[RMDB]
RNA sequence: GGGAACGACUCGAGUAGAGUCGAAAAUCAGCGACCGGCGCGUCGGACCCGUGCGCGGCCAGCGAAGUGGCGAGGACGGUCGGUUCGGUCGCCAAGUCGAUGGGCGACUACCUGGAUUCACACCCAGCCGAAAAGGGAGGUUCGCCUCCCUUUUCGGAAAAGAAACAACAACAACAAC
Reactivity to 2A3 in 0.01 (KOAc 150mM, MgCl2 10mM, bicine 150mM(pH8.5), 24C), signal-to-noise 2, nucleotides 027 to 126: u040c000a010g060c020g040a000c000c000g020g040c190g000c010g140u020c000g000g070a070c030c000c030g050u090g040c150g000c000g070g190c120c050a030g000c010g070a170a040g060u030g130g000c060g000a050g110g000a000c010g070g110u140c030g000g000u040u050c000g010g000u000c000g020c000c010a140a040g090u050c070g110a060u080g040g020g060c010g000a000c000u020a060c010c020u010g090g010a070u080u090c020a010c000a000c040c010c000a000g030
Reactivity to DMS in 0.01 (KOAc 150mM, MgCl2 10mM, bicine 150mM(pH8.5), 24C), signal-to-noise 1, nucleotides 027 to 126: u000c060a060g050c230g000a020c050c010g000g000c000g050c050g010u000c000g000g000a300c300c020c080g000u060g040c110g000c030g060g000c090c110a180g000c000g000a160a080g040u070g000g080c000g000a300g000g000a010c020g010g050u020c080g050g010u030u000c150g000g070u000c050g000c000c080a080a000g040u000c100g000a070u030g000g000g010c000g030a020c010u000a150c240c010u010g000g020a110u000u010c270a030c140a110c010c000c020a070g020

Chemical mapping of a 177-nucleotide RNA with 2A3 and DMS.
DMS (dimethyl sulfate) methylates the pairing face of unpaired adenines and cytosines.
The DMS profile rests on 1,084 reads.
For 2A3, 1,059 sequencing reads were counted.
Reactivities are rounded to 0.1 and cut off at 0 and 3.